[RMDB]
This 207-nucleotide RNA was probed chemically with 2A3 and DMS. The reactions ran in a buffer of 150 mM KOAc, 10 mM MgCl2 and 150 mM bicine (pH 8.5), at 24 C. DMS adducts were read by reverse transcription with MarathonRT. It was measured as part of the RMDB library OK3TST. For 2A3 the reverse transcriptase was SuperScript II with manganese. For DMS, 3,265 sequencing reads were counted. The 2A3 profile rests on 1,000 reads.
RNA sequence: GGGAACGACUCGAGUAGAGUCGAAAAUGAUUGGGCCUCAAGAAUGCAGAAUUCCUAACUGUACAUCUAGACAUUGACCUUCAAGCUUGUGUCUAAAGUUGAUGAUAUUUUAAAACCUGAGGUUAUCAAAUGGUCGGCUUUCUAUGAACAUAGGAUACAUCCAGGUAAUCUUCGGAUUACCUGGAUGAAAAGAAACAACAACAACAAC
Reactivity to 2A3 in 0.01 (KOAc 150mM, MgCl2 10mM, bicine 150mM(pH8.5), 24C), signal-to-noise 2, nucleotides 027 to 156: u070g020a030u040u010g000g000g000c020c000u050c010a030a100g030a030a010u050g010c020a010g010a100a090u110u040c000c000u020a060a020c010u030g040u080a040c000a050u040c030u050a020g020a070c020a050u010u150g060a080c000c000u070u040c090a080a050g020c020u070u040g020u020g030u020c030u040a030a080a070g040u060u020g030a030u000g020a020u010a170u100u100u040u050a060a080a010a020c000c060u040g060a040g070g000u030u030a030u060c000a010a040a100u070g010g000u060c030g000g040c040u040u040u010c050u090a080u100g020a040a020c020a080u220a160g110g020a050u300a060
Reactivity to DMS in 0.01 (KOAc 150mM, MgCl2 10mM, bicine 150mM(pH8.5), 24C), signal-to-noise 2, nucleotides 027 to 156: u020g020a100u010u010g000g000g000c020c050u000c050a090a140g000a070a030u000g010c000a070g010a120a120u000u000c030c010u000a030a090c020u000g030u010a060c080a070u000c050u000a080g020a070c020a050u000u000g010a080c040c020u000u000c130a060a040g010c050u000u000g030u020g030u000c010u000a030a040a090g030u010u000g000a130u000g010a090u010a050u000u000u000u000a040a090a120a050c020c040u000g020a060g040g010u000u010a070u000c030a050a090a100u000g020g030u000c010g010g010c100u010u000u000c010u020a070u010g000a100a030c040a080u000a080g010g000a280u010a120